[RMDB]
RNA sequence: GGGAACGACUCGAGUAGAGUCGAAAACGUCUCCGUUCGCGGAGACGAAAAACCGUAGGCUCGUGAGAGGCUUUUGACGCGAUAACUGUUCGAAAGAGCAGGGAUCGCGAUAAGCCUCCCGAGCCUAAACGGAAAAAUGAUGCCUUCGGGCAUCAAAACGAAAGUAAUUGUUCGCAAUUACUUUCGUAAAAGAAACAACAACAACAAC
Reactivity to 2A3 in 0.01 (KOAc 150mM, MgCl2 10mM, bicine 150mM(pH8.5), 24C), signal-to-noise 3, nucleotides 027 to 156: c000g000u000c010u000c000c010g020u050u040c220g010c020g140g000a000g000a010c010g010a020a010a000a010a000c000c000g020u020a010g000g000c010u010c000g120u240g090a300g000a020g070g000c010u070u060u040u150g220a090c040g010c000g000a000u010a010a020c000u000g000u020u000c000g050a170a090a060g000a030g000c000a010g000g010g000a000u000c000g000c000g000a000u000a010a000g000c000c000u000c000c010c010g010a000g080c000c000u000a000a000a000c010g020g050a080a030a000a030a040u140g000a000u020g000c010c000u060u070c280g040g000g000c000a000u000c010a010a050a000
Reactivity to DMS in 0.01 (KOAc 150mM, MgCl2 10mM, bicine 150mM(pH8.5), 24C), signal-to-noise 2, nucleotides 027 to 156: c000g040u010c000u000c000c000g060u010u000c260g040c020g030g000a020g090a020c010g000a020a030a050a120a060c000c000g000u000a030g010g040c010u010c020g040u010g030a190g050a020g020g010c000u000u010u010u010g020a290c100g020c000g010a030u000a030a010c010u000g000u010u000c010g020a170a140a260g000a020g010c020a040g010g020g020a030u020c000g020c000g010a010u000a030a030g020c000c000u000c000c020c010g010a040g010c010c000u000a000a000a050c020g010g000a010a090a100a140a170u000g010a010u000g000c030c020u000u010c300g040g020g040c000a020u020c000a020a020a130